[RMDB]
Chemical mapping of a 177-nucleotide RNA with 2A3 and DMS.
Reactivities are rounded to 0.1 and cut off at 0 and 3.
Reactivities are given for positions 27 through 126.
For DMS the reverse transcriptase was MarathonRT.
It was measured as part of the RMDB libraries RFM100 and RFMREP.
RNA sequence: GGGAACGACUCGAGUAGAGUCGAAAAACGCGAUUACGAUCGCGAAAAACCUCAUCUUCGAUCUAUGCCAUCCGGGCGUUGAUCAGUGCCUCCAGCACGGGCGUUCGCCCAGAUGAGGAGAGAGUAAUCUCCUUAUACGUUUCGACGUAUAAGGAGAAAAAGAAACAACAACAACAAC
Reactivity to 2A3 in 0.01 (KOAc 150mM, MgCl2 10mM, bicine 150mM(pH8.5), 24C), signal-to-noise 9, nucleotides 027 to 126: a000c000g000c000g000a000u020u060a030c210g060a030u010c000g000c000g080a060a000a000a010a000c000c010u020c010a030u000c010u020u020c100g010a010u000c000u040a010u030g010c010c000a120u100c190c130g220g000g000c000g010u000u020g010a020u010c000a000g000u000g000c000c040u110c040c020a010g000c000a000c000g000g000g000c040g120u280u300c200g000c000c000c000a000g000a000u010g010a020g060g000a010g010a000g000a010g030u130a090a110
Reactivity to DMS in 0.01 (KOAc 150mM, MgCl2 10mM, bicine 150mM(pH8.5), 24C), signal-to-noise 6, nucleotides 027 to 126: a080c010g020c000g020a010u000u010a130c170g010a050u010c010g010c010g000a020a050a050a120a070c000c000u000c010a020u000c000u000u000c130g010a000u000c010u000a020u010g010c010c010a160u040c230c230g000g010g000c000g030u000u010g000a020u000c000a040g000u000g000c000c070u020c110c090a240g010c010a010c010g000g000g000c010g010u010u020c180g000c000c000c000a020g000a010u000g000a010g000g000a050g000a120g020a110g000u030a120a160